[RMDB]
The data come from the RNA Mapping Database (RMDB), library M2RFPK.
The record gives the reactivity of an RNA of 207 nucleotides to 2A3.
2A3 adducts were read by reverse transcription with SuperScript II with manganese.
The RNA was probed in 150 mM KOAc, 10 mM MgCl2 and 150 mM bicine (pH 8.5) at 24 C.
RNA sequence: GGGAACGACUCGAGUAGAGUCGAAAAGCUUCCUCUUGUCGCGGAGGUUUAACUGCGCUCGCUCCCCAUAUCGGUGUGGGCGCACCGGAUUUACAAAUUAAAGUCCUUUAGGGAGCGGAAAGGGACAAAAACUUGCACGUGUUCGCACGUGCAAGAAGAUUUUGCCAAUGUUCGCAUUGGCAAAAUCAAAAGAAACAACAACAACAAC
Reactivity to 2A3 in 0.01 (KOAc 150mM, MgCl2 10mM, bicine 150mM(pH8.5), 24C), signal-to-noise 2, nucleotides 027 to 156: g060c020u040u030c000c010u100c020u020u050g040u090c020g000c010g010g140a070g020g000u060u070u190a040a040c020u060g000c030g000c030u030c000g000c010u030c040c050c000c000a070u170a150u150c000g000g000u010g010u040g020g000g000c020g000c020a000c000c000g000g010a020u060u220u090a120c270a070a010a030u120u170a060a090a000g000u000c000c050u030u040u050a000g000g000g010a010g010c030g010g020a150a030a010g070g020g020a020c070a030a040a010a040a060c000u000u000g000c000a000c000g010u000g050u000u080c120g070c070a000c010g000u010g000c000a000a000g000a010a000